[RMDB]
RNA sequence: GGGAACGACUCGAGUAGAGUCGAAAAAAACAAGACGAUGGGGCGAAGGUGGCGAGCGUGGCGGUGGAAGGACGGAAACGCAUGCGUACAUGCGUGUAUGCGAUGCGCGCGAAUCAGAUUAGUAACACGUAAUGGCGAGAUUCGUCUCGCCAUUACGAAAAGAAACAACAACAACAAC
Reactivity to DMS in 0.01 (KOAc 150mM, MgCl2 10mM, bicine 150mM(pH8.5), 24C), signal-to-noise 1, nucleotides 027 to 126: a000a050a060c120a030a090g000a160c090g000a210u010g010g000g000g020c070g010a060a100g040g010u010g000g000c090g000a070g010c150g000u020g010g040c110g040g000u010g040g010a110a020g010g010a050c090g000g000a120a120a070c010g000c000a050u020g000c060g020u020a000c020a010u000g040c120g020u000g000u000a020u000g000c010g000a040u000g000c020g020c100g000c040g000a030a040u010c060a060g000a090u010u000a140g020u010a070a120c220a140
Chemical mapping of a 177-nucleotide RNA with DMS.